[RMDB]
RNA sequence: GGGAACGACUCGAGUAGAGUCGAAAAAGAAUGUCAGUGCCUAAAGGUAGCGCGCAUGAGAAACAGUUACCAAAAACUGGAACUAAUCAAAGCUCAAGCCCAGCAGCGAUGUUUGUAUUAGUAGCAGCCUAACCGUCCUGUUCGCAGGACGGUUAGGAAAAGAAACAACAACAACAAC
Reactivity to 2A3 in 0.01 (KOAc 150mM, MgCl2 10mM, bicine 150mM(pH8.5), 24C), signal-to-noise 2, nucleotides 027 to 126: a000g130a000a070u140g000u040c020a020g080u000g120c020c050u100a120a070a070g120g040u100a010g050c010g000c000g070c010a050u030g150a000g000a050a060a000c020a000g000u040u020a290c050c000a080a100a010a050a050c020u060g000g070a000a000c000u080a050a070u020c060a060a000a170g000c000u030c060a100a000g000c000c010c000a000g000c040a000g030c050g050a060u010g150u000u000u110g150u030a160u180u150a030g020u020a000g020c000a020g100
Reactivity to DMS in 0.01 (KOAc 150mM, MgCl2 10mM, bicine 150mM(pH8.5), 24C), signal-to-noise 1, nucleotides 027 to 126: a090g000a060a050u010g000u000c000a090g000u000g000c030c060u010a060a080a040g030g000u020a070g000c040g020c170g000c050a090u000g040a090g000a110a130a110c160a000g000u000u030a030c050c050a040a060a050a060a010c110u000g000g040a050a120c020u000a000a080u020c050a020a150a070g000c050u000c020a080a060g010c080c000c060a020g000c060a060g000c020g000a030u000g040u000u040u020g000u000a080u000u000a040g000u000a030g030c050a150g000